[RMDB]
RNA sequence: GGGAACGACUCGAGUAGAGUCGAAAAAACACCACUGAGUAGGAGCUUUGUCCUUUGCUAUAGACAGGUGAUGUAUCUUCAGGGUCAGAGAACCAUGGUGUAGAGCUGCCCUUGCUCUUGCCGAUUGAGAGCUAGGUAAGAGUUGGGUCACCUGCUACGGACUGUGGACCUUCGGGUCCACAGUCCGAAAAGAAACAACAACAACAAC
Reactivity to 2A3 in 0.01 (KOAc 150mM, MgCl2 10mM, bicine 150mM(pH8.5), 24C), signal-to-noise 1, nucleotides 027 to 156: a000a000c020a080c050c000a000c020u030g020a010g090u060a020g010g120a020g070c020u050u080u120g050u000c010c000u030u050u110g070c060u080a080u020a230g010a150c000a000g000g060u050g020a130u080g110u170a130u040c080u080u140c030a030g150g000g000u090c080a050g040a010g150a260a050c020c040a080u140g100g000u110g050u160a120g030a000g100c030u070g000c010c000c000u000u060g000c000u000c000u000u000g050c050c000g020a050u090u130g070a010g020a010g100c050u050a050g000g000u000a000a000g000a010g000u000u270g020g000g000u010c030a000c000c000u000g000c030u010a080